[RMDB]
Structure probing data (DMS and 2A3) for a 170-nucleotide construct.
RNA sequence: GGGAACGACUCGAGUAGAGUCGAAAAAGCCUCCCGAUACGAGUUUGCCAGGACCUAUCAAGUUUGGAGUCAUCCGGCCCGUAGGGGAGAAUAGAACACCGGGGGGUGAUCCACCAGGAGAAGGAGCAUGCACAUGUGUUCGCACAUGUGAAAAGAAACAACAACAACAAC
Reactivity to DMS in 0.01 (KOAc 150mM, MgCl2 10mM, bicine 150mM(pH8.5), 24C), signal-to-noise 9, nucleotides 027 to 129: a130g020c130c030u020c000c000c000g020a100u030a070c120g010a090g030u030u040u030g020c020c030a070g030g030a080c050c020u030a080u010c100a060a080g020u010u030u030g020g010a050g010u000c130a140u030c010c030g000g000c020c020c030g040u030a030g000g000g010g010a020g010a070a050u050a080g000a060a060c060a070c050c050g030g000g030g000g000g020u000g000a050u010c040c020a070c090c050a020g000g000a050g000a040a050g000g000a020g010c100a060u030g020
Reactivity to 2A3 in 0.01 (KOAc 150mM, MgCl2 10mM, bicine 150mM(pH8.5), 24C), signal-to-noise 9, nucleotides 027 to 129: a000g060c010c010u030c010c000c000g020a020u050a100c060g010a050g110u060u150u110g090c020c030a080g020g010a060c010c010u080a090u170c070a130a100g050u060u130u110g060g000a030g020u040c010a060u020c030c010g010g010c000c000c010g040u060a050g010g010g040g010a020g010a020a050u190a060g070a070a010c030a020c030c000g010g000g010g010g000g010u020g010a010u010c010c000a020c010c010a050g010g030a030g010a030a020g010g000a010g020c030a050u170g030

For 2A3, 76,495 sequencing reads were counted. Conditions: 150 mM KOAc, 10 mM MgCl2 and 150 mM bicine (pH 8.5), 24 C. The data come from the RNA Mapping Database (RMDB), library 15KLIB.